[RMDB]
RNA sequence: GGGAACGACUCGAGUAGAGUCGAAAAGCGAAUUCCAAUUCAUUGCAGGUGAAUUACCAUUAAGCACUUUGCCCCCUGUGCUAUACGCCAUCACUGCCUAUUACGUUAUUAUUUUUGGUGGCAGGUAUACGCUUUUAUUAUUCGUAAUAAAAGCGUAAAAAGAAACAACAACAACAAC
Reactivity to 2A3 in 0.01 (KOAc 150mM, MgCl2 10mM, bicine 150mM(pH8.5), 24C), signal-to-noise 5, nucleotides 027 to 126: g080c030g070a040a110u110u050c020c010a010a020u070u050c020a020u040u140g070c040a020g100g020u030g040a050a050u090u050a060c020c020a060u110u130a110a020g000c010a020c070u300u300u300g110c000c000c010c000c000u010g000u000g000c000u010a030u020a040c070g010c000c000a020u020c000a010c030u030g050c020c020u140a180u170u100a070c060g140u100u030a100u130u040a150u090u260u020u060u040g040g000u000g020g010c010a010g040g020u020a040
Reactivity to DMS in 0.01 (KOAc 150mM, MgCl2 10mM, bicine 150mM(pH8.5), 24C), signal-to-noise 9, nucleotides 027 to 126: g010c080g020a080a110u000u010c050c060a100a120u000u000c040a060u000u000g010c080a060g010g010u000g010a050a040u000u010a090c060c050a110u000u000a080a070g000c030a020c020u010u010u010g020c030c000c000c030c080u000g010u000g010c020u000a100u010a110c180g010c010c010a030u000c030a070c080u000g010c060c180u000a090u000u010a080c170g000u010u010a070u010u010a150u010u000u000u000u000g010g020u000g000g010c010a030g000g010u000a110